[RMDB]
RNA sequence: GGGAACGACUCGAGUAGAGUCGAAAAAGCUGCUACGGCAGCAAAAAGGCCCUAACCACGGAGCCUCGCAAUCGUUCUCCGCUUUGCCGUGGCCGAAAUCUAGAUUCAAAAAGAGCUCCCGGAGGAAUAUGUCAUGAAUCUUCGGAUUCAUGACAUAAAAAGAAACAACAACAACAAC
Reactivity to 2A3 in 0.01 (KOAc 150mM, MgCl2 10mM, bicine 150mM(pH8.5), 24C), signal-to-noise 1, nucleotides 027 to 126: a000g010c000u010g000c010u000a000c070g090g000c010a000g000c000a000a070a040a000a000g040g010c000c000c000u020a050a070c050c000a040c050g020g000a030g030c000c010u000c020g070c040a080a220u080c040g010u010u040c010u000c000c010g030c020u050u070u130g000c000c010g020u000g020g000c000c040g090a060a040a000u070c040u060a060g020a120u100u100c040a060a020a140a150a070g060a090g070c000u020c010c000c000g030g010a040g050g010a070a090
Reactivity to DMS in 0.01 (KOAc 150mM, MgCl2 10mM, bicine 150mM(pH8.5), 24C), signal-to-noise 1, nucleotides 027 to 126: a170g010c010u000g000c000u010a120c140g020g000c000a080g000c020a040a020a090a120a070g020g000c030c020c000u000a220a120c210c070a100c160g070g000a080g000c010c000u040c140g040c230a140a150u020c040g000u000u000c010u020c050c020g020c050u010u030u030g030c070c000g030u000g000g000c020c020g000a020a080a070u010c050u000a170g000a090u000u020c030a030a160a070a170a070g000a140g060c090u000c000c000c000g040g000a140g030g040a070a120
Source: RMDB library RFM100, as collected in RNAgym.
Chemical mapping of a 177-nucleotide RNA with 2A3 and DMS.
In probing experiments dimethyl sulfate is read out at A N1 and C N3, which are open when not base-paired.
2A3 adducts were read by reverse transcription with SuperScript II with manganese.
For DMS, 1,115 sequencing reads were counted.
The RNA was probed in 150 mM KOAc, 10 mM MgCl2 and 150 mM bicine (pH 8.5) at 24 C.